Chemical mapping of a 207-nucleotide RNA with 2A3. The reactions ran in a buffer of 150 mM KOAc, 10 mM MgCl2 and 150 mM bicine (pH 8.5), at 24 C.
RNA sequence: GGGAACGACUCGAGUAGAGUCGAAAAAGCUGAAAUCUAACUUCUUGGCUAACAUCUAGCUAAGAUCUGCAGGAUGGAGAGGUUAGCCUCGAGAUGACUGAGGAUGGGGACGGAGAGUUCCGCAUGGGAGCAGUAUGUGGAAAGUCGAGAAAGCCAACUCGGAUGAGGAUUUCGAUCCUCAUCCGAGAAAAGAAACAACAACAACAAC
Reactivity to 2A3 in 0.01 (KOAc 150mM, MgCl2 10mM, bicine 150mM(pH8.5), 24C), signal-to-noise 1, nucleotides 027 to 156: a000g170c130u050g040a030a020a130u070c030u020a000a290c020u030u000c000u010u020g040g000c000u030a020a020c070a270u140c090u030a060g030c020u000a030a030g040a070u000c010u070g030c080a020g020g150a080u060g020g010a010g010a010g060g020u020u020a030g110c000c030u000c050g080a090g050a110u170g050a050c230u120g040a010g080g000a080u080g010g000g000g000a000c070g040g030a110g000a030g080u080u000c050c010g030c000a010u070g060g000g000a080g050c000a010g080u100a070u060g040u020g020g000a110a040a000g080u010c010g010a010g100a150a000a040g100c160c000a020a070
The data come from the RNA Mapping Database (RMDB), library OK3TST.